[RMDB]
RNA sequence: GGGAACGACUCGAGUAGAGUCGAAAAAGGCGAAGUGGCGGCUUUCUGUAGCGCCCUAUACAGGUACAAUAGGUUCACCCAGCGCCAUUCGCUGACUGGCGGGCUGUGGCUGCACCCAGAAGGGCUCCAUUGUUCAUUCCUUCGGGAAUGAACAAUGAAAAGAAACAACAACAACAAC
Reactivity to 2A3 in 0.01 (KOAc 150mM, MgCl2 10mM, bicine 150mM(pH8.5), 24C), signal-to-noise 2, nucleotides 027 to 126: a000g010g000c010g000a050a020g160u000g080g000c050g040g070c040u040u130u030c010u020g020u010a010g060c040g000c050c000c000u000a010u000a010c020a010g030g060u080a040c080a140a210u090a210g060g020u100u220c050a080c040c030c020a020g000c010g020c000c000a020u020u000c050g010c070u030g040a050c060u020g050g060c050g000g040g030c060u060g050u100g160g000c040u030g000c020a010c000c000c000a020g040a080a020g030g000g020c000u000c000
Reactivity to DMS in 0.01 (KOAc 150mM, MgCl2 10mM, bicine 150mM(pH8.5), 24C), signal-to-noise 4, nucleotides 027 to 126: a100g010g000c020g010a050a040g020u010g020g020c030g010g010c040u000u000u010c030u000g000u000a020g000c080g010c090c010c000u000a130u000a030c060a040g000g010u000a040c140a100a150u000a060g010g010u000u010c150a110c090c010c030a090g010c010g010c030c030a050u000u000c030g020c020u010g010a090c130u010g010g010c030g000g000g030c050u000g020u010g010g000c050u000g010c060a130c050c020c040a130g010a100a050g010g010g020c040u010c080